[RMDB]
RNA sequence: GGGAACGACUCGAGUAGAGUCGAAAAACGCUGCAAAGGUGAUCUUCCGAAACGAGGUGACAAAUGAGUUCUUGUACUACAAUGUGAGUUUCAGGGUCAUCCCUUCAGGCAUCAUCAAAACCAUCGAGUAUUAUCGCUGUUUCGACAGCGAUAAUACAAAAGAAACAACAACAACAAC
Reactivity to 2A3 in 0.01 (KOAc 150mM, MgCl2 10mM, bicine 150mM(pH8.5), 24C), signal-to-noise 3, nucleotides 027 to 126: a000c020g010c040u040g020c050a040a000a140g000g020u020g020a040u030c030u110u050c110c050g040a000a000a000c040g030a050g090g100u160g050a030c020a010a100a070u150g020a060g070u050u070c040u100u090g060u130a060c020u030a060c060a080a170u160g070u070g080a040g030u000u060u000c020a030g000g030g040u020c010a070u090c040c010c000u010u030c020a040g020g010c020a010u040c010a000u020c000a030a080a060a100c020c010a070u130c060g020a030
Reactivity to DMS in 0.01 (KOAc 150mM, MgCl2 10mM, bicine 150mM(pH8.5), 24C), signal-to-noise 3, nucleotides 027 to 126: a110c130g000c080u000g000c120a060a060a130g000g030u010g010a040u010c030u000u020c080c050g020a020a030a060c070g000a100g020g010u000g010a050c050a000a080a110u010g000a110g000u010u000c160u010u000g000u010a060c070u000a040c170a090a130u000g010u000g000a120g020u000u000u000c030a040g000g010g010u000c040a040u010c010c020c020u000u000c060a130g010g020c250a060u000c050a050u000c080a030a010a110a110c090c070a050u020c070g010a240

This 177-nucleotide RNA was probed chemically with 2A3 and DMS.
Source: RMDB library OK2TST, as collected in RNAgym.
The 2A3 profile rests on 3,392 reads.
DMS adducts were read by reverse transcription with MarathonRT.
The RNA was probed in 150 mM KOAc, 10 mM MgCl2 and 150 mM bicine (pH 8.5) at 24 C.